[RMDB]
RNA sequence: GGGAACGACUCGAGUAGAGUCGAAAAUGUUCAUCGACAACAUCUUCCGGUUCACCCAGGCUGGGUCGGAAGUGUCGACGCUUCUCGGCCGGAUGCCGUCGGCCGUGGGAUACCAGCCCACGCUGGCCCAACGGGCCCUAUUCGUAGGGCCCGUUGGAAAAGAAACAACAACAACAAC
Reactivity to 2A3 in 0.01 (KOAc 150mM, MgCl2 10mM, bicine 150mM(pH8.5), 24C), signal-to-noise 1, nucleotides 027 to 126: u120g010u060u090c060a130u120c110g040a060c030a140a010c000a110u030c010u000u000c010c020g020g000u000u000c040a070c030c010c040a070g260g000c110u050g020g000g050u010c020g020g010a020a010g030u030g090u070c010g000a030c030g040c030u040u000c020u010c030g030g020c010c030g090g000a090u170g060c030c010g060u030c020g000g000c030c040g000u020g000g010g010a010u090a230c040c020a040g090c000c020c000a030c030g010c030u050g010g000c000
Reactivity to DMS in 0.01 (KOAc 150mM, MgCl2 10mM, bicine 150mM(pH8.5), 24C), signal-to-noise 2, nucleotides 027 to 126: u000g020u000u000c040a090u000c070g000a070c020a060a070c140a110u010c030u000u000c000c030g030g000u000u000c100a060c060c070c090a080g020g000c260u020g000g000g000u000c000g000g000a030a020g020u010g000u000c040g000a030c060g000c090u000u000c030u000c040g000g030c000c020g030g040a070u000g020c030c020g010u000c020g020g010c030c090g030u000g010g000g000a130u010a120c110c170a200g000c010c010c040a030c030g010c050u000g010g000c100
Chemical mapping of a 177-nucleotide RNA with 2A3 and DMS. Values are in units of 0.01, from 0 to 300, in steps of 10. For 2A3, 1,402 sequencing reads were counted. The reactions ran in a buffer of 150 mM KOAc, 10 mM MgCl2 and 150 mM bicine (pH 8.5), at 24 C. For DMS the reverse transcriptase was MarathonRT.